[RMDB]
RNA sequence: GGGAACGACUCGAGUAGAGUCGAAAACGCCAAUCUUCGGAUUGGCGAAAAAACCUUUGUGACGCCACCGACAGCUUGGAUUUAGCGAUCCCAUUGGGAUCGCUUGUCAGCUGGGGUGGGCGUCACUCUGGUAAAAACCGCGCUUUCGAGCGCGGAAUACAGAGUUGAGGUUCGCCUCAACUCUGUAAAAAGAAACAACAACAACAAC
Reactivity to 2A3 in 0.01 (KOAc 150mM, MgCl2 10mM, bicine 150mM(pH8.5), 24C), signal-to-noise 1, nucleotides 027 to 156: c040g000c010c000a000a000u040c020u040u120c270g100g010a020u000u000g000g040c000g000a040a000a000a000a000a000c000c020u000u000u000g040u030g000a000c000g050c010c000a000c000c000g300a300c140a000g000c000u160u200g110g040a120u300u300u000a000g000c000g000a000u000c060c020c050a300u300u300g030g000g000a010u000c000g010c010u000u000g000u010c000a000g000c010u000g000g040g000g000u000g030g020g000c000g000u000c000a000c000u000c000u000g000g010u040a040a040a040a040a040c000c000g000c000g000c000u070u220u260c250g110a000g010c010g010c000g000g000a000a000